[RMDB]
RNA sequence: GGGAACGACUCGAGUAGAGUCGAAAAUUCAUCAGUUUCUUGUUCGUUUCAAAAUUAUGAUUUUUGUUUACUUACACUCAUAAUCUUGAAACGAACAAAAAACUGAUGGAAAAACAUGAGGACUUUAGAAUACUGUGAAGUUCGCUUCACAGUAUUCAAAAGAAACAACAACAACAAC
Reactivity to DMS in 0.01 (KOAc 150mM, MgCl2 10mM, bicine 150mM(pH8.5), 24C), signal-to-noise 1, nucleotides 027 to 126: u030u010c000a000u000c000a000g030u000u000u000c010u020u010g020u000u000c020g050u000u000u010c000a010a000a010a020u000u000a010u000g000a040u020u010u060u010u010g020u000u020u070a110c260u030u030a020c030a110c300u000c000a000u000a000a000u000c030u010u020g000a000a040a080c020g030a000a000c000a000a000a010a000a000a000c000u000g000a000u000g010g030a000a030a080a090a090c090a020u020g010a130g010g000a180c030u000u000u000a180
Reactivity to 2A3 in 0.01 (KOAc 150mM, MgCl2 10mM, bicine 150mM(pH8.5), 24C), signal-to-noise 3, nucleotides 027 to 126: u020u000c000a000u000c000a000g000u000u000u000c020u000u000g000u000u000c000g000u000u000u000c000a010a010a020a000u000u000a000u000g050a060u060u050u080u200u240g100u060u140u050a090c040u100u090a010c010a000c030u010c000a000u000a000a000u000c010u010u000g000a000a000a000c000g000a000a000c000a000a000a000a000a000a000c000u000g000a000u000g000g010a030a000a000a010a000c040a080u190g080a100g050g060a020c010u030u000u010a070
Structure probing data (DMS and 2A3) for a 177-nucleotide construct. For 2A3, 2,842 sequencing reads were counted. For DMS, 1,875 sequencing reads were counted.